[RMDB]
The data come from the RNA Mapping Database (RMDB), library OK3TST. This 207-nucleotide RNA was probed chemically with 2A3. For 2A3, 595 sequencing reads were counted. Conditions: 150 mM KOAc, 10 mM MgCl2 and 150 mM bicine (pH 8.5), 24 C. Reactivities are rounded to 0.1 and cut off at 0 and 3. For 2A3 the reverse transcriptase was SuperScript II with manganese.
RNA sequence: GGGAACGACUCGAGUAGAGUCGAAAACAACCUGGGAGCAGCUGGCUCUGGGCCUUGAACAUUCCGAAACUGUCAAGAUUGGCAAGGUUGAUUGUACACAGCACUAUGAACUCUGCUCCGGAAACCAGGUUCGUGGCUAUCCCACUCUUCUCUGGUAGCCUGAUCGAGUGUUCGCACUCGAUCAGGCAAAAGAAACAACAACAACAAC
Reactivity to 2A3 in 0.01 (KOAc 150mM, MgCl2 10mM, bicine 150mM(pH8.5), 24C), signal-to-noise 2, nucleotides 027 to 156: c000a000a010c000c000u020g060g000g000a000g010c020a000g020c260u050g030g000c020u000c010u030g040g000g010c000c000u080u150g030a050a020c020a000u100u040c090c010g110a200a110a020c080u020g010u030c040a120a060g070a300u250u140g010g060c040a020a020g070g020u030u030g040a040u030u010g000u080a040c020a020c030a030g020c010a040c170u070a090u300g020a030a000c040u000c010u060g000c020u030c000c000g030g030a090a040a000c030c000a000g020g000u040u070c060g050u050g020g020c030u050a080u050c000c020c020a040c030u140c030u210u020c110u050c040u110g000g000u140a040